[RMDB]
This 207-nucleotide RNA was probed chemically with 2A3.

RNA sequence: GGGAACGACUCGAGUAGAGUCGAAAAAAGAAACGUGUUGCAACGUACCUACCGAAUUGGGCGGCGGAGAAAAUGGAAGGGAUUGAAUUGCAUUCCGAUGCCUGCGGGGGAGUAUCUGAGUAAGGGGGCGGUAUCGUUCUGCUGAAGGUCCUGCGUGGAGCGCAAAUAGGUUCGCCUAUUUGCGCUCAAAAGAAACAACAACAACAAC
Reactivity to 2A3 in 0.01 (KOAc 150mM, MgCl2 10mM, bicine 150mM(pH8.5), 24C), signal-to-noise 1, nucleotides 027 to 156: a000a010g070a030a000a000c060g020u030g050u080u140g000c020a110a050c060g010u010a060c000c000u010a040c020c020g060a210a160u240u160g000g010g000c040g000g070c050g090g000a020g020a120a020a000a100u070g050g050a030a080g050g000g020a070u000u080g010a110a060u140u080g010c020a010u050u020c000c010g020a020u010g000c000c010u020g020c030g010g010g000g000g000a000g040u030a010u070c120u110g010a050g070u140a080a130g000g000g000g000g000c050g000g010u030a060u050c010g000u020u000c010u030g010c040u020g010a060a030g070g010u000c000c010u020g010c030g050u050g040
Overview
The reactions ran in a buffer of 150 mM KOAc, 10 mM MgCl2 and 150 mM bicine (pH 8.5), at 24 C.